[RMDB]
About this RNA: Chemical mapping of a 177-nucleotide RNA with 2A3. Reactivities are given for positions 27 through 126. For 2A3 the reverse transcriptase was SuperScript II with manganese.

RNA sequence: GGGAACGACUCGAGUAGAGUCGAAAACGCUCAACUCAUGUAGCGCAAAACAUGGGAGAAAAGCACUGGAAACAGUGCAAAGAGCUGAGGAUUACCUCAGCAAAGGAUCAGCGAAAAGCUGAUCCAACCUGGUGAGGUGGUUCGCCACCUCACCAGGAAAAGAAACAACAACAACAAC
Reactivity to 2A3 in 0.01 (KOAc 150mM, MgCl2 10mM, bicine 150mM(pH8.5), 24C), signal-to-noise 2, nucleotides 027 to 126: c030g010c030u030c050a100a080c060u030c010a010u000g010u000a010g010c030g090c270a000a000a220a000c000a000u030g000g030g010a060g190a020a030a060a000g000c000a000c000u000g020g020a010a020a000c000a000g000u010g000c000a000a040a030g040a010g000c000u000g000a000g000g010a110u060u300a190c000c000u000c000a000g000c000a000a090a000g000g000a000u000c000a000g000c010g050a010a000a220a140g000c000u000g020a000u040c000c000a000a000